[RMDB]
RNA sequence: GGGAACGACUCGAGUAGAGUCGAAAAAGCAGCGGAGAGGAAGUGACCACUACUGAUGAGAAUCUAGUCACAUCUACAGUAGCACAAUUGGAGGAAGGAAGCGGUAUUACUGCUGCGGAAUCAAAGAGUGAUACGAUGAUUUCGAUCAUCGUAUCACAAAAGAAACAACAACAACAAC
Reactivity to DMS in 0.01 (KOAc 150mM, MgCl2 10mM, bicine 150mM(pH8.5), 24C), signal-to-noise 4, nucleotides 027 to 126: a120g010c070a050g010c010g020g010a220g000a080g010g010a070a110g040u000g010a200c050c050a170c050u000a020c040u000g000a160u000g000a050g010a100a080u010c090u000a100g020u000c100a050c130a090u000c050u000a260c040a010g020u000a050g020c080a060c110a090a110u010u000g000g020a060g020g010a120a090g010g010a080a100g010c010g010g010u020a080u020u000a090c070u000g000c010u000g020c040g000g000a090a100u000c140a030a070a070g000a140
Reactivity to 2A3 in 0.01 (KOAc 150mM, MgCl2 10mM, bicine 150mM(pH8.5), 24C), signal-to-noise 3, nucleotides 027 to 126: a030g000c050a000g010c020g060g010a070g000a010g100g090a080a040g040u030g040a060c010c030a030c040u050a000c020u030g050a080u080g040a060g010a090a050u080c090u100a080g170u040c030a020c010a150u020c020u060a070c000a030g000u030a010g020c050a010c030a110a130u150u140g050g020a040g030g040a100a050g030g020a020a000g010c030g000g000u050a030u130u080a070c040u050g020c010u000g000c040g040g060a030a060u100c060a060a060a020g120a040
Overview:
An RNA of 177 nucleotides, treated with DMS and 2A3 and read out base by base. For DMS, 2,342 sequencing reads were counted. Values cover nucleotides 27 to 126. The 2A3 profile rests on 2,969 reads. The reactions ran in a buffer of 150 mM KOAc, 10 mM MgCl2 and 150 mM bicine (pH 8.5), at 24 C.